RNA sequence: GGGAACGACUCGAGUAGAGUCGAAAAGGUGGCCGUGCUGCCACCGAAAUUCAGCGUGCCGAACGCUUCGGCGUUCUCGACCUGAUAGUCACCGGCAAUGCCGCUCACCUGUUUGGCCGCGUCGAGCGACUGGUCAGGUCUUCGGACCUGACCAGUCAAAAGAAACAACAACAACAAC
Reactivity to 2A3 in 0.01 (KOAc 150mM, MgCl2 10mM, bicine 150mM(pH8.5), 24C), signal-to-noise 2, nucleotides 027 to 126: g000g000u010g000g000c050c110g220u160g040c200u150g020c000c010a000c000c010g000a010a010a020u040u030c010a000g000c030g110u090g090c010c030g010a010a000c010g000c000u050u030c090g040g000c000g010u030u020c060u070c020g070a060c000c010u050g050a020u080a040g080u060c020a040c160c000g010g000c020a030a060u140g010c000c000g000c010u050c030a080c020c040u080g050u080u040u080g050g010c010c040g000c040g080u070c030g030a050g050c050
Reactivity to DMS in 0.01 (KOAc 150mM, MgCl2 10mM, bicine 150mM(pH8.5), 24C), signal-to-noise 2, nucleotides 027 to 126: g020g040u010g010g010c020c080g030u000g030c110u040g000c050c050a010c030c030g030a030a070a100u020u010c060a080g010c120g000u010g000c120c090g000a040a040c020g020c020u000u000c090g030g020c000g050u000u000c040u000c090g010a060c050c030u010g000a060u010a110g020u000c040a090c090c000g000g000c110a060a140u000g000c030c010g000c110u020c080a070c070c030u010g000u010u000u020g010g010c040c050g020c170g000u000c100g000a050g020c150